Record summary
Chemical mapping of a 207-nucleotide RNA with 2A3 and DMS. For 2A3, 2,002 sequencing reads were counted. For DMS the reverse transcriptase was MarathonRT. For 2A3 the reverse transcriptase was SuperScript II with manganese.
[RMDB]
RNA sequence: GGGAACGACUCGAGUAGAGUCGAAAACGGGGCCUAGCAAUGUCACAGCUAAAUGCCCACCAGGGCACACACUCAAGCGGGGUCUCGGAGCUCCUAGGUCAGACCACGAAAGGUCAGCCUGCAAGGUGGAUGGCGUGUUUUCUGAGGUUAUCCCCGCACAUACUGUCCGAUUCGUCGGACAGUAUGUAAAAGAAACAACAACAACAAC
Reactivity to 2A3 in 0.01 (KOAc 150mM, MgCl2 10mM, bicine 150mM(pH8.5), 24C), signal-to-noise 3, nucleotides 027 to 156: c040g030g020g010g000c000c040u020a020g030c040a060a100u150g050u180c080a040c010a050g020c030u100a130a090a000u080g000c000c000c010a030c050c030a070g010g000g020c060a030c020a010c000a010c070u130c110a080a040g020c000g000g020g010g020u030c000u010c030g000g010a010g020c020u040c030c020u030a020g040g030u030c040a040g000a130c010c020a030c140g160a130a060a010g000g020u030c030a040g020c010c000u050g050c100a080a050g070g020u030g010g060a060u080g040g000c110g040u100g050u030u170u030u030c010u030g020a020g040g050u110u100a110u200c020c000c010c000g030c010
Reactivity to DMS in 0.01 (KOAc 150mM, MgCl2 10mM, bicine 150mM(pH8.5), 24C), signal-to-noise 2, nucleotides 027 to 156: c040g000g010g060g060c030c050u000a070g000c010a120a080u000g030u000c070a020c120a070g050c040u020a010a110a140u010g010c010c020c010a090c090c220a210g010g030g000c020a030c040a110c050a090c010u000c070a120a110g030c000g030g030g030g000u000c000u000c010g020g000a120g020c040u010c010c010u020a070g020g020u010c020a220g030a040c000c000a100c030g020a200a230a170g000g020u000c010a040g030c000c010u010g030c120a090a110g030g070u000g040g020a110u000g010g000c030g010u000g000u000u010u010u000c070u020g000a040g030g020u000u000a070u030c010c010c000c000g000c090